The data come from the RNA Mapping Database (RMDB), library OK2TRN. Chemical mapping of a 177-nucleotide RNA with 2A3 and DMS. 2A3 adducts were read by reverse transcription with SuperScript II with manganese. The reactions ran in a buffer of 150 mM KOAc, 10 mM MgCl2 and 150 mM bicine (pH 8.5), at 24 C.
RNA sequence: GGGAACGACUCGAGUAGAGUCGAAAAUGGACACAGAGACUCGGUUUGAUCAUCAAUCAAGAGGAAACCAUGCAAUCUGCUGAUUUUCUGAUCUAUGGGAAAGUCCCAAUAUAUCGAGGUAACGUGUCCUCAAUAACACGUUCGCGUGUUAUUGAGGAAAAGAAACAACAACAACAAC
Reactivity to 2A3 in 0.01 (KOAc 150mM, MgCl2 10mM, bicine 150mM(pH8.5), 24C), signal-to-noise 3, nucleotides 027 to 126: u070g040g010a020c000a000c000a000g020a010g140a100c010u000c010g030g020u020u080u120g020a020u030c020a000u030c040a040a060u020c020a030a000g040a060g110g010a040a070a030c070c020a060u190g020c030a050a170u050c030u080g030c010u010g040a060u040u010u050u030c030u020g010a030u000c010u030a080u060g020g000g060a130a220a190g180u140c000c000c010a020a000u150a010u000a010u040c000g000a010g000g020u030a040a010c030g010u000g010u040
Reactivity to DMS in 0.01 (KOAc 150mM, MgCl2 10mM, bicine 150mM(pH8.5), 24C), signal-to-noise 4, nucleotides 027 to 126: u010g010g010a020c020a000c000a050g010a200g030a070c000u010c010g000g030u000u010u000g010a020u000c040a090u000c250a080a080u010c130a100a140g020a080g030g000a030a030a040c080c060a040u020g010c030a200a120u010c180u000g020c120u000g000a040u000u000u010u000c070u000g010a050u010c010u000a070u000g010g020g000a100a120a140g010u000c000c000c000a010a070u000a090u000a020u000c030g010a030g000g000u020a090a200c140g020u000g010u000